Chemical mapping of a 177-nucleotide RNA with 2A3 and DMS.
For DMS the reverse transcriptase was MarathonRT.
The reactions ran in a buffer of 150 mM KOAc, 10 mM MgCl2 and 150 mM bicine (pH 8.5), at 24 C.
Values are in units of 0.01, from 0 to 300, in steps of 10.
It was measured as part of the RMDB library RFMREP.
2A3 adducts were read by reverse transcription with SuperScript II with manganese.
[RMDB]
RNA sequence: GGGAACGACUCGAGUAGAGUCGAAAACGGUGAAUGCCUUGGUGCCAACAGGCGAAGAAGGACGCGGCAAGCUGCGAAAAGCCUCGGGAAGCUGCAAGCAAGCGAUGAUCCGGGGAUAUCCGAAUGGCAUUCAAUUGCAGUUCGCUGCAAUUGAAUGAAAAGAAACAACAACAACAAC
Reactivity to 2A3 in 0.01 (KOAc 150mM, MgCl2 10mM, bicine 150mM(pH8.5), 24C), signal-to-noise 2, nucleotides 027 to 126: c030g080g030u120g050a100a070u140g020c010c010u080u140g070g050u150g020c030c010a070a070c050a200g010g000c020g020a070a010g030a050a030g030g000a000c010g000c010g010g020c010a020a000g000c030u000g000c000g050a010a010a000a010g050c000c000u020c010g000g000g000a020a020g000c000u000g040c010a010a020g030c000a010a010g010c000g100a200u030g000a000u000c000c010g000g000g010g000a000u020a010u000c000c000g020a090a070u090g050g000
Reactivity to DMS in 0.01 (KOAc 150mM, MgCl2 10mM, bicine 150mM(pH8.5), 24C), signal-to-noise 3, nucleotides 027 to 126: c110g010g030u010g020a080a040u020g000c000c040u000u020g010g030u010g020c010c020a110a110c180a140g020g010c040g010a090a110g030a130a190g000g010a020c010g000c010g000g000c020a050a080g010c020u000g000c020g000a010a060a030a040g010c000c000u000c020g010g000g000a020a030g030c000u000g010c030a050a300g010c020a050a010g010c010g000a040u010g000a000u000c000c000g010g010g000g000a020u000a020u010c000c010g000a090a130u000g010g010